Chemical mapping of a 177-nucleotide RNA with 2A3 and DMS. The RNA was probed in 150 mM KOAc, 10 mM MgCl2 and 150 mM bicine (pH 8.5) at 24 C. Values cover nucleotides 27 to 126.
RNA sequence: GGGAACGACUCGAGUAGAGUCGAAAAGACGUUGCCGUAGGGGUUGGUGUCGCUCCAGGGCGCCGGCUGAAACUCGUGUUCAGUGACCGAGUUCUGAACGCCGUCGACCAUCAUAUCGAGCCGGGCACGUCAGGCGUACUUUCGAGUACGCCUGACGAAAAGAAACAACAACAACAAC
Reactivity to 2A3 in 0.01 (KOAc 150mM, MgCl2 10mM, bicine 150mM(pH8.5), 24C), signal-to-noise 2, nucleotides 027 to 126: g020a010c070g000u050u130g030c000c000g130u120a080g030g010g000g000u050u170g050g000u050g050u030c040g000c020u080c010c040a000g000g000g070c010g000c010c010g000g030c000u030g060a100a030a030c040u030c030g210u140g050u140u070c090a120g040u090g240a000c020c000g050a020g000u000u000c050u070g060a060a020c080g040c030c000g050u030c000g000a040c020c000a000u000c050a030u050a030u170c030g020a000g050c010c010g000g000g000c010a010
Reactivity to DMS in 0.01 (KOAc 150mM, MgCl2 10mM, bicine 150mM(pH8.5), 24C), signal-to-noise 1, nucleotides 027 to 126: g000a040c060g000u000u010g000c000c040g000u000a060g010g000g010g000u010u000g000g020u000g000u000c120g020c060u000c000c140a060g000g010g000c020g000c030c030g000g030c060u010g000a060a100a000c000u020c000g000u030g010u000u000c210a220g050u040g000a180c000c000g000a080g020u000u010c150u030g040a040a100c280g020c000c030g010u000c040g000a060c010c000a170u040c180a150u000a150u000c030g000a070g010c070c030g000g000g020c100a270